RNA sequence: GGGAACGACUCGAGUAGAGUCGAAAAAUUUGCCGCUGGUAGCGGGCGAGGUUGCGGGCCUUGCGGUCCAGAUGCUUCGGGUUGGCGAUCUUCUCGCCUGUCGACAGGACAGCAAAGUCCUUCACACCCUUGUGAACCAGUUCGCUGGUUCACAAGGAAAAGAAACAACAACAACAAC
Reactivity to DMS in 0.01 (KOAc 150mM, MgCl2 10mM, bicine 150mM(pH8.5), 24C), signal-to-noise 1, nucleotides 027 to 126: a070u000u000u000g040c000c060g000c020u000g050g040u010a160g040c000g020g020g010c040g010a050g000g020u000u000g020c300g010g000g020c020c010u010u000g000c070g010g030u010c020c020a120g010a280u000g010c120u010u000c020g000g000g010u010u000g060g020c000g000a020u010c210u060u000c190u010c010g010c020c010u010g000u000c020g020a020c130a110g010g000a120c060a070g000c060a030a030a090g010u000c000c000u000u010c100a180c130a190c080
An RNA of 177 nucleotides, treated with DMS and read out base by base. For DMS the reverse transcriptase was MarathonRT. It was measured as part of the RMDB library RFMREP. The DMS profile rests on 738 reads. The RNA was probed in 150 mM KOAc, 10 mM MgCl2 and 150 mM bicine (pH 8.5) at 24 C.